[RMDB]
RNA sequence: GGGAACGACUCGAGUAGAGUCGAAAAGGUCGGCUGAUUUCUAGGGUCUCACUUUAAACAGGCUACGCUUGGACCCUUCCGUCUGGAGGGAAAGAGAAGAGAUGGAAUCAGACUGGUCGGACGGACGCCUGUCAAUUGGCAGCCUGACGACGAGAUCGGUUGAUAACAGGUUCGCCUGUUAUCAACCAAAAGAAACAACAACAACAAC
Reactivity to 2A3 in 0.01 (KOAc 150mM, MgCl2 10mM, bicine 150mM(pH8.5), 24C), signal-to-noise 2, nucleotides 027 to 156: g010g000u020c000g020g000c000u000g020a030u040u080u000c090u130a070g160g000g120u030c010u030c030a120c020u070u100u210a150a130a020c030a020g030g000c020u110a050c100g000c010u050u010g000g000a050c010c000c000u000u070c050c030g100u090c120u200g000g000a020g020g000g030a000a060a000g040a010g000a050a000g020a000g000a050u160g010g020a010a000u030c000a000g140a240c030u030g030g000u000c000g000g020a010c010g010g020a060c040g040c010c000u040g060u180c010a170a200u160u090g000g010c010a030g000c000c010u020g070a030c020g020a010c050g040a020g010a080u090c060
Reactivity to DMS in 0.01 (KOAc 150mM, MgCl2 10mM, bicine 150mM(pH8.5), 24C), signal-to-noise 1, nucleotides 027 to 156: g000g000u000c030g010g080c020u010g000a080u000u000u000c050u000a180g020g030g010u020c020u000c050a120c110u000u010u010a060a120a160c080a100g000g010c030u000a050c170g020c040u000u000g040g040a300c010c000c000u000u040c000c060g010u000c150u020g050g090a020g040g000g000a040a140a300g000a120g000a080a050g020a160g010a170u000g000g000a060a050u000c000a070g010a090c030u020g020g050u000c040g000g000a130c130g010g050a080c000g050c070c010u040g000u000c130a080a260u000u040g020g000c000a050g010c080c010u000g010a180c000g000a110c040g000a050g000a020u000c040
The record gives the reactivity of an RNA of 207 nucleotides to 2A3 and DMS.
Source: RMDB library RSTRND, as collected in RNAgym.
For 2A3, 1,355 sequencing reads were counted.
For DMS the reverse transcriptase was MarathonRT.